[RMDB]
RNA sequence: GGGAACGACUCGAGUAGAGUCGAAAAGACAAAUGCAGCAUAUUAGGCUAAGCAGGAAAGGGACGGUUGCUCCUGGUGUCAGUUCAUACGGUGUGAUGCAUCUGCGUCGUGCACACAUGCACCCAAAUAGAAGACGCUAGUUCGCUAGCGUCUUCUAAAAAGAAACAACAACAACAAC
Reactivity to DMS in 0.01 (KOAc 150mM, MgCl2 10mM, bicine 150mM(pH8.5), 24C), signal-to-noise 1, nucleotides 027 to 126: g000a080c050a020a100a110u000g010c030a010g010c020a050u040a080u000u010a100g020g000c040u000a100a070g010c070a050g000g000a070a070a060g000g020g000a090c090g000g020u000u000g030c080u010c040c050u000g020g030u000g000u020c030a060g020u000u010c120a090u010a100c110g030g000u000g010u000g000a090u010g020c040a040u010c070u000g000c080g030u000c070g030u000g000c020a030c070a060c060a000u000g000c010a120c000c000c010a040a120a220